[RMDB]
RNA sequence: GGGAACGACUCGAGUAGAGUCGAAAAAUUUUGUCCUCUUUGCUUUGGUUUUUAAAGAGAGAAAGCUGAAGCUACAGUUUAGUCUCGUCAUUCUCCCUCCCUGCUCUGGCACUCGGGAGGCUGAGGCAGGAGAAUCGCUUGAAACCGGAGGGCAGAGUCGAUUGGAGAUUUUCGAAUCUCCAAUCGAAAAAGAAACAACAACAACAAC
Reactivity to 2A3 in 0.01 (KOAc 150mM, MgCl2 10mM, bicine 150mM(pH8.5), 24C), signal-to-noise 1, nucleotides 027 to 156: a000u060u080u030u010g010u020c000c000u000c020u090u060u090g000c020u030u050u000g010g020u080u020u030u070u090a150a300a030g130a020g010a020g020a000a000a020g000c010u020g010a040a000g000c020u040a020c080a050g020u060u120u130a020g020u010c010u020c030g140u050c010a050u200u020c020u030c030c000c000u010c000c010c000u000g020c000u060c050u170g090g000c050a050c040u090c020g000g000g000a000g000g000c000u010g000a000g000g000c020a000g000g090a000g000a020a040u150c030g000c050u020u020g020a110a040a060c030c000g000g000a000g000g020g000c000a000g050a040g040